[RMDB]
RNA sequence: GGGAACGACUCGAGUAGAGUCGAAAACGAGGACGUUUCCCAGCCAGGGGUUGUCAUCCUCAAGUUUCUUGAGCUUCUUGUUGGUUCGCCGGAGAUCCUUCUCGAGAAUUCGCCUUUUCUUCCUUUCAAGCUAUGGAGUUCGCUCCAUAGAAAAGAAACAACAACAACAAC
Reactivity to 2A3 in 0.01 (KOAc 150mM, MgCl2 10mM, bicine 150mM(pH8.5), 24C), signal-to-noise 9, nucleotides 027 to 129: c040g010a050g040g110a030c010g000u020u060u070c000c000c010a010g050c060c040a040g000g020g000g000u050u050g050u110c040a080u060c020c020u030c020a030a030g030u040u080u070c040u030u050g030a020g010c010u050u030c010u080u180g090u070u060g050g000u040u060c040g020c030c020g030g010a050g010a030u030c010c000u040u050c020u000c000g060a050g010a060a090u090u070c030g040c000c000u040u050u020u020c030u040u030c020c000u070u140u110c060a070a030g040
Reactivity to DMS in 0.01 (KOAc 150mM, MgCl2 10mM, bicine 150mM(pH8.5), 24C), signal-to-noise 9, nucleotides 027 to 129: c070g000a080g000g000a070c060g000u020u020u020c000c000c010a140g020c070c060a030g040g030g020g030u000u000g030u000c070a050u010c090c020u000c030a090a090g040u030u010u010c010u000u040g000a140g020c170u000u000c050u040u030g010u060u000g040g000u000u010c070g000c030c020g010g010a070g000a090u000c040c030u030u000c020u020c040g030a150g010a140a130u050u020c040g030c040c050u010u020u010u010c060u020u020c040c040u010u040u030c120a090a130g020